[RMDB]
RNA sequence: GGGAACGACUCGAGUAGAGUCGAAAAGUGACCGUCAGCAUGAAGCCGGGCGACGGCCUGCACCACCUGGUGCUGCUGCCGGGGCGGGGGCUGGAAGAGAAGGAAGUGGGCCGCAUGAACGAACUGGCAAACUACGAGUUUUCGAACUCGUAGUUUGAAAAGAAACAACAACAACAAC
Reactivity to DMS in 0.01 (KOAc 150mM, MgCl2 10mM, bicine 150mM(pH8.5), 24C), signal-to-noise 4, nucleotides 027 to 126: g010u000g010a160c020c020g000u000c020a080g020c040a030u010g020a100a160g030c040c020g040g010g010c120g020a140c030g010g000c010c040u000g010c010a060c010c010a230c230c210u020g020g030u000g000c030u010g000c070u000g020c040c010g010g010g010g020c070g000g000g000g000g000c060u000g000g000a080a070g000a100g000a120a100g010g010a060a070g020u010g000g020g000c040c050g000c080a060u010g010a040a100c120g010a070a110c110u000g000g010
Reactivity to 2A3 in 0.01 (KOAc 150mM, MgCl2 10mM, bicine 150mM(pH8.5), 24C), signal-to-noise 2, nucleotides 027 to 126: g050u050g020a090c030c020g000u020c000a050g000c030a030u090g140a110a020g020c010c020g050g060g020c120g080a110c050g010g000c000c030u030g000c010a010c000c000a020c040c080u100g000g030u000g040c000u030g030c020u070g000c000c000g000g020g020g000c020g030g000g020g000g000c010u070g030g020a070a010g030a010g010a090a040g030g000a080a040g030u090g050g010g040c020c030g050c070a100u140g030a050a020c080g030a080a050c030u080g110g000
This 177-nucleotide RNA was probed chemically with DMS and 2A3. For 2A3 the reverse transcriptase was SuperScript II with manganese. For DMS the reverse transcriptase was MarathonRT. The RNA was probed in 150 mM KOAc, 10 mM MgCl2 and 150 mM bicine (pH 8.5) at 24 C.